[RMDB]
RNA sequence: GGGAACGACUCGAGUAGAGUCGAAAAAGAGCCAACUCAGACUUUAACCCAUUCCAGUCCUGCGGGGAUGGCUGCUCUUCUGGGCCCGGAAAUGGCUCCCUUUUCUUUCAGUAGCCUCGUUUGCCCUGUGAGCUCCUUGUCUGACCAGGGGGUCGGCAUACCAAGAGGAAUUCGUUCCUCUUGGUAUAAAAGAAACAACAACAACAAC
Reactivity to DMS in 0.01 (KOAc 150mM, MgCl2 10mM, bicine 150mM(pH8.5), 24C), signal-to-noise 1, nucleotides 027 to 156: a070g000a060g050c010c030a030a110c060u010c050a080g000a020c090u020u020u000a100a120c180c000c010a150u000u010c040c030a100g010u010c070c070u000g060c060g000g010g000g030a030u010g020g020c040u050g000c010u000c060u000u000c030u050g020g020g000c050c060c050g030g000a060a090a130u000g050g020c020u010c020c020c030u010u010u000u010c050u020u010u000c030a070g030u000a080g040c010c010u000c000g000u010u000u000g030c050c050c030u000g020u000g030a100g020c050u000c030c000u010u000g000u000c030u020g010a160c090c050a140g000g020g010g040g010u010c040g010g030c000
Reactivity to 2A3 in 0.01 (KOAc 150mM, MgCl2 10mM, bicine 150mM(pH8.5), 24C), signal-to-noise 2, nucleotides 027 to 156: a000g060a000g030c010c000a040a050c060u040c070a010g020a100c030u120u170u180a070a060c020c000c010a050u040u000c020c010a030g060u050c010c040u190g030c120g020g010g000g000a020u010g010g060c010u030g000c010u040c010u170u110c030u000g000g020g000c030c080c000g080g020a060a060a040u070g010g010c000u120c030c010c010u150u150u110u080c050u040u160u040c030a030g020u090a020g050c010c000u030c050g020u010u130u180g070c030c010c050u110g020u030g090a020g000c010u050c000c000u110u150g080u090c040u050g020a050c030c000a040g020g000g010g010g030u020c020g030g020c010